[RMDB]
RNA sequence: GGGAACGACUCGAGUAGAGUCGAAAAGACGCCCAGGCGGGGCGGCCGGUCGGGUCGACGCGGCGGGUGGUGGAUAUGUCAUCGGGGGCCCGCCAGGCGGCGCUGGUGCGCCUCACCGCCCUGGAACCGUUCCCUUGGACUUCGGUCCAAGGGAACGAAAAGAAACAACAACAACAAC
Reactivity to 2A3 in 0.01 (KOAc 150mM, MgCl2 10mM, bicine 150mM(pH8.5), 24C), signal-to-noise 1, nucleotides 027 to 126: g090a000c030g160c070c000c000a000g010g000c010g000g020g000g040c000g000g030c000c000g020g030u130c010g200g090g220u010c000g040a040c000g100c010g130g000c100g050g000g000u300g000g130u080g000g140a130u020a070u300g160u210c110a000u030c030g040g000g000g300g000c010c000c000g080c000c000a000g040g000c050g010g040c000g000c000u010g000g000u260g120c040g000c010c000u040c040a000c000c030g010c000c000c020u000g000g040a030a040c010